[RMDB]
RNA sequence: GGGAACGACUCGAGUAGAGUCGAAAACGCUCAACUCAUGGAGCGGAAAACAUGGGAGAAAAGCACUGGAAACAGUGCAAAGAGCUGAGGAUUACCUCAGCAAAGGAUCAGCGAAAAGCUGAUCCAACCAGGGAGGCGGAUUCGUCCGCCUCCCUGGAAAAGAAACAACAACAACAAC
Reactivity to 2A3 in 0.01 (KOAc 150mM, MgCl2 10mM, bicine 150mM(pH8.5), 24C), signal-to-noise 1, nucleotides 027 to 126: c000g010c000u030c000a000a210c080u040c050a000u010g020g020a060g040c300g100g060a190a180a000a000c000a000u000g000g000g000a040g020a000a120a000a000g010c010a000c000u000g000g110a090a160a000c000a000g020u000g000c000a000a000a000g040a000g020c000u000g050a000g100g060a120u300u000a190c020c020u000c000a000g000c000a030a040a040g000g000a000u000c000a000g000c020g040a010a050a300a000g000c000u000g000a000u000c000c000a020a020
An RNA of 177 nucleotides, treated with 2A3 and read out base by base.
The 2A3 profile rests on 588 reads.
Conditions: 150 mM KOAc, 10 mM MgCl2 and 150 mM bicine (pH 8.5), 24 C.
It was measured as part of the RMDB library OK1LIB.